[RMDB]
RNA sequence: GGGAACGACUCGAGUAGAGUCGAAAAGAUAUGGAUGUUCUGGAGCAAUGCUGCGUUGAAAGUCCUGUUAUCGGAAACGAUAACAGGACUGGAGCAGCCUCUUGCGAUGAAAGAACAUCCUAAGUCAGCAAGUAAGAAGGUUCGCCUUCUUACUUGCAAAAGAAACAACAACAACAAC
Reactivity to DMS in 0.01 (KOAc 150mM, MgCl2 10mM, bicine 150mM(pH8.5), 24C), signal-to-noise 1, nucleotides 027 to 126: g030a030u010a300u010g040g000a030u000g000u010u000c010u000g010g000a100g010c010a240a000u000g000c000u000g010c000g000u000u000g000a150a180a060g000u000c010c000u000g020u000u000a000u000c000g000g000a120a140a250c000g000a010u000a000a010c000a000g010g010a010c020u000g000g000a090g000c000a010g010c000c000u000c000u000u010g000c020g020a120u000g000a180a150a000g010a000a000c000a010u000c000c010u010a020a050g010u020c040a160
Chemical mapping of a 177-nucleotide RNA with DMS. Conditions: 150 mM KOAc, 10 mM MgCl2 and 150 mM bicine (pH 8.5), 24 C. DMS adducts were read by reverse transcription with MarathonRT.